[RMDB]
RNA sequence: GGGAACGACUCGAGUAGAGUCGAAAAUGUGGGCCUGCUGCAGGCCACCCCAUGCUGGGGGAGUGACCACAGCACAGCCCGCGGGGAUGGUGGCCUUGUGGGAAAGGCGAAGGCAUGCUUCCAAUGAGCAAAUUGUAUUUAUUCAUGAAUUUGCAUGUCCGUUAUAGAAGUUCGCUUCUAUAACGGAAAAAGAAACAACAACAACAAC
Reactivity to 2A3 in 0.01 (KOAc 150mM, MgCl2 10mM, bicine 150mM(pH8.5), 24C), signal-to-noise 5, nucleotides 027 to 156: u100g000u030g000g050g010c000c010u010g010c010u010g000c070a150g010g010c000c000a000c020c000c000c000a100u260g080c220u230g060g020g010g040g030a160g070u050g030a110c000c020a010c040a030g030c000a010c020a020g050c010c010c010g000c010g000g010g000g010a070u080g010g050u040g030g020c030c070u120u040g020u080g000g020g060a080a100a060g040g000c010g010a020a010g030g000c020a010u030g000c020u070u010c020c020a040a120u150g030a040g040c020a020a030a040u050u060g050u080a100u060u210u050a130u060u110c060a060u100g050a040a040u070u010u080g000c000a010u040g030
Reactivity to DMS in 0.01 (KOAc 150mM, MgCl2 10mM, bicine 150mM(pH8.5), 24C), signal-to-noise 2, nucleotides 027 to 156: u010g030u010g020g030g060c000c030u010g020c070u010g030c030a090g070g000c000c000a000c000c000c010c000a130u000g030c150u020g020g020g020g040g010a100g010u000g010a260c040c050a070c010a040g010c010a040c150a120g010c000c010c020g040c050g060g000g020g000a240u000g000g030u000g010g000c020c010u000u000g030u010g010g000g000a050a060a080g030g000c020g020a080a110g000g000c030a140u000g000c010u000u010c000c040a180a140u010g000a160g000c030a020a000a040u000u000g020u000a300u010u000u000a130u020u000c050a100u020g020a010a040u000u000u000g010c000a130u020g000

An RNA of 207 nucleotides, treated with 2A3 and DMS and read out base by base.
The RNA was probed in 150 mM KOAc, 10 mM MgCl2 and 150 mM bicine (pH 8.5) at 24 C.
The DMS profile rests on 3,611 reads.
The data come from the RNA Mapping Database (RMDB), library OK3TST.